[RMDB]
RNA sequence: GGGAACGACUCGAGUAGAGUCGAAAAAGCGCCAGCUCAAGGAGCUGGUCCUCUACUCGCCGCAACACGUCGCGCGGCUGGAAAAGGCAGGCCAAUUCCCCAAGCGGGUACAGCUGGGCCCGAACAGUCGCUCCUAUCAUUUCGAUGAUAGGAGCGAAAAAGAAACAACAACAACAAC
Reactivity to 2A3 in 0.01 (KOAc 150mM, MgCl2 10mM, bicine 150mM(pH8.5), 24C), signal-to-noise 3, nucleotides 027 to 126: a000g150c120g000c010c000a010g000c000u010c080a130a170g240g000a000g050c010u000g000g020u000c020c000u000c000u010a010c000u010c010g050c020c000g110c030a060a030c060a030c160g090u080c000g020c020g000c010g040g000c000u050g060g040a090a140a010a010g040g020c000a010g030g000c010c000a020a050u070u100c030c000c000c010a110a000g040c100g060g020g000u050a090c050a000g020c040u040g070g090g010c000c010c000g010a050a000c010a010g030
Reactivity to DMS in 0.01 (KOAc 150mM, MgCl2 10mM, bicine 150mM(pH8.5), 24C), signal-to-noise 2, nucleotides 027 to 126: a030g030c270g030c030c020a000g000c010u020c080a220a100g100g000a020g000c000u000g000g080u000c100c010u010c020u000a100c000u040c090g000c160c070g000c060a050a110c030a140c100g000u000c010g020c170g000c020g000g000c000u000g000g010a080a100a300a050g010g000c220a220g000g000c000c080a030a260u060u000c000c000c000c100a130a250g040c090g010g030g030u000a150c280a030g070c000u000g000g000g010c010c000c030g000a130a120c110a050g010